[RMDB]
RNA sequence: GGGAACGACUCGAGUAGAGUCGAAAAGGGGUCAAGUGGAGUCUGACAUGCACAGUACUGAAGCCUCCACGGUACAGAAGUGCAACAGCAGACUCGUAACAUCUUGACGGAGGCACCCAAACACUCGUCCAAGAAGUUCGCUUCUUGGACGAGUGAACAAAGAAAGUGACUUCGGUCACUUUCUUUGAAAAGAAACAACAACAACAAC
Reactivity to 2A3 in 0.01 (KOAc 150mM, MgCl2 10mM, bicine 150mM(pH8.5), 24C), signal-to-noise 3, nucleotides 027 to 156: g080g000g020g040u020c030a010a000g060u150g280g000a000g010u020c000u000g060a230c030a170u040g020c010a000c020a030g000u000a000c010u050g030a090a020g000c000c000u000c010c000a040c020g000g000u000a000c040a030g190a300a050g110u020g020c070a180a060c030a230g120c030a010g000a010c000u000c000g020u020a040a050c020a060u090c000u000u010g010a000c000g020g000a000g000g000c000a060c000c020c000a020a080a010c010a000c000u000c000g020u000c000c000a000a000g000a000a000g020u090u260c280g090c130u000u000c000u000u020g000g020a000c000g000a000g010u000g000a000a000
Reactivity to DMS in 0.01 (KOAc 150mM, MgCl2 10mM, bicine 150mM(pH8.5), 24C), signal-to-noise 2, nucleotides 027 to 156: g000g010g000g020u000c000a010a040g050u000g030g020a040g000u000c020u000g010a090c060a190u000g010c000a010c010a220g030u000a030c000u010g010a040a140g000c040c000u010c020c020a300c000g000g000u000a040c000a090g010a090a210g000u000g000c000a160a120c130a140g000c020a010g000a050c010u010c030g040u030a070a150c080a060u000c020u000u000g020a050c000g010g030a000g060g020c040a130c010c000c010a130a100a240c020a020c020u000c000g050u000c000c000a030a020g020a030a030g030u000u000c300g000c020u000u000c010u010u000g000g010a010c000g000a010g020u000g000a040a170
Structure probing data (2A3 and DMS) for a 207-nucleotide construct. The RNA was probed in 150 mM KOAc, 10 mM MgCl2 and 150 mM bicine (pH 8.5) at 24 C. For DMS, 4,354 sequencing reads were counted. It was measured as part of the RMDB library RNAMAK. For DMS the reverse transcriptase was MarathonRT. Reactivities are given for positions 27 through 156.